[RMDB]
RNA sequence: GGGAACGACUCGAGUAGAGUCGAAAACGAUCAGUACGUUCGCGUACUGAUCGAAGCUACUGGAGACAGUAGCAAGUCUAAGACCUUGUUAUGCGGAAACAAGGAAAAAUGGAGGAAGGGCGGACCUCCAUACUUAGACAACCGCGAACCGUCCAAACUCACUGGUACGGUUCGCCGUACCAGUGAGAAAAGAAACAACAACAACAAC
Reactivity to DMS in 0.01 (KOAc 150mM, MgCl2 10mM, bicine 150mM(pH8.5), 24C), signal-to-noise 2, nucleotides 027 to 156: c000g000a000u000c010a000g030u000a010c000g050u000u010c200g000c010g050u000a030c010u000g000a010u010c010g000a010a050g040c000u000a030c030u000g020g000a300g000a300c000a000g010u000a010g020c010a030a100g050u000c010u010a040a020g010a300c010c030u000u020g000u010u000a060u000g040c290g000g000a170a050a010c000a000a040g010g020a000a030a040a110a070u000g000g000a040g000g000a030a020g000g050g080c010g000g020a300c010c020u000c020c030a010u000a010c010u000u000a000g000a030c030a050a140c080c010g000c030g000a030a030c000c030g000u010c010c010a060a070a110
Reactivity to 2A3 in 0.01 (KOAc 150mM, MgCl2 10mM, bicine 150mM(pH8.5), 24C), signal-to-noise 6, nucleotides 027 to 156: c010g000a000u000c000a000g000u000a000c010g020u020u070c200g000c000g090u010a000c000u000g000a000u000c000g000a000a000g000c000u000a000c000u010g010g010a050g020a030c000a000g000u000a000g000c000a000a020g000u000c000u000a010a030g020a210c000c000u020u010g030u030u050a120u260g180c130g080g070a070a010a000c010a010a000g000g000a040a100a050a030a010u020g000g000a000g020g020a050a270g020g000g000c030g010g040a210c000c000u000c000c010a000u010a010c000u010u000a000g000a010c020a030a060c090c050g090c060g080a010a010c000c000g000u000c000c010a010a010a040

An RNA of 207 nucleotides, treated with DMS and 2A3 and read out base by base.
For DMS, 2,820 sequencing reads were counted.
2A3 adducts were read by reverse transcription with SuperScript II with manganese.
The 2A3 profile rests on 9,194 reads.
In probing experiments dimethyl sulfate is read out at A N1 and C N3, which are open when not base-paired.
Conditions: 150 mM KOAc, 10 mM MgCl2 and 150 mM bicine (pH 8.5), 24 C.
Source: RMDB library OK3TST, as collected in RNAgym.